[RMDB]
RNA sequence: GGGAACGACUCGAGUAGAGUCGAAAACGGCGACGUUAGGAAGUCCGGAGACGCCGGCGGGGGCCUCGGGAAGAGUUAUCUUUUCUGCUUAACGGCCUGCCAACCCUGGAAUCGGUUCAGCCGGAGGGUUGGACUGCAGUUUCGACUGCAGUCCAACAAAAGAAACAACAACAACAAC
Reactivity to 2A3 in 0.01 (KOAc 150mM, MgCl2 10mM, bicine 150mM(pH8.5), 24C), signal-to-noise 1, nucleotides 027 to 126: c010g050g000c040g030a050c060g010u060u130a070g040g000a080a040g030u000c000c000g000g020a020g000a010c110g020c020c000g000g000c010g050g040g010g010g030c000c020u050c020g000g010g020a000a050g010a000g040u120u220a080u080c070u030u060u040u000c010u070g210c010u040u040a000a090c050g030g000c000c000u000g080c000c000a050a020c000c000c000u040g080g080a050a100u060c030g030g000u020u050c050a030g110c010c010g010g030a000g020g030
Reactivity to DMS in 0.01 (KOAc 150mM, MgCl2 10mM, bicine 150mM(pH8.5), 24C), signal-to-noise 1, nucleotides 027 to 126: c010g000g040c150g000a170c090g000u010u010a070g000g030a030a080g000u000c060c010g010g000a110g000a150c270g000c010c000g010g000c030g000g020g000g000g010c040c030u000c180g000g080g000a060a030g000a040g010u010u030a040u000c000u010u000u040u000c000u000g050c230u000u000a020a240c180g040g000c020c020u010g000c060c010a040a160c000c030c000u010g010g020a220a140u030c040g000g010u030u030c140a090g010c000c000g000g000a030g000g030
Background:
Conditions: 150 mM KOAc, 10 mM MgCl2 and 150 mM bicine (pH 8.5), 24 C. Structure probing data (2A3 and DMS) for a 177-nucleotide construct. For 2A3, 607 sequencing reads were counted.